An RNA of 207 nucleotides, treated with 2A3 and read out base by base. 2A3 adducts were read by reverse transcription with SuperScript II with manganese. Source: RMDB library VIROID, as collected in RNAgym. The 2A3 profile rests on 1,138 reads.

[RMDB]
RNA sequence: GGGAACGACUCGAGUAGAGUCGAAAAGCUACUACCCGGUGGAAACAACUGAAGCUUCAACGCCUUUUUUUUCCUAUCUUCUUUAGCACCGGGCUAGGGAGUAAGCCCGUGGAACCUUAGUUUUGUUCCCUCCGGACUUACUUGUGGGUCCUGUGUUCUUAACCUAUAGGUUCGCCUAUAGGUUAAGAAAAGAAACAACAACAACAAC
Reactivity to 2A3 in 0.01 (KOAc 150mM, MgCl2 10mM, bicine 150mM(pH8.5), 24C), signal-to-noise 2, nucleotides 027 to 156: g030c030u060a070c010u070a040c090c000c010g050g030u060g010g020a140a060a060c020a030a030c080u070g070a170a020g030c010u160u170c120a070a030c070g050c020c040u000u010u000u010u000u010u010u020c060c020u100a190u150c060u100u030c000u000u140u060a020g010c000a010c040c050g000g040g000c000u010a020g020g090g010a000g000u000a000a010g000c000c000c010g010u050g000g010a010a010c000c000u100u120a200g070u240u300u190u240g010u000u030c010c000c010u000c020c000g010g010a000c000u000u000a010c020u040u060g300u100g170g000g000u010c000c010u000g030u020g010u030u010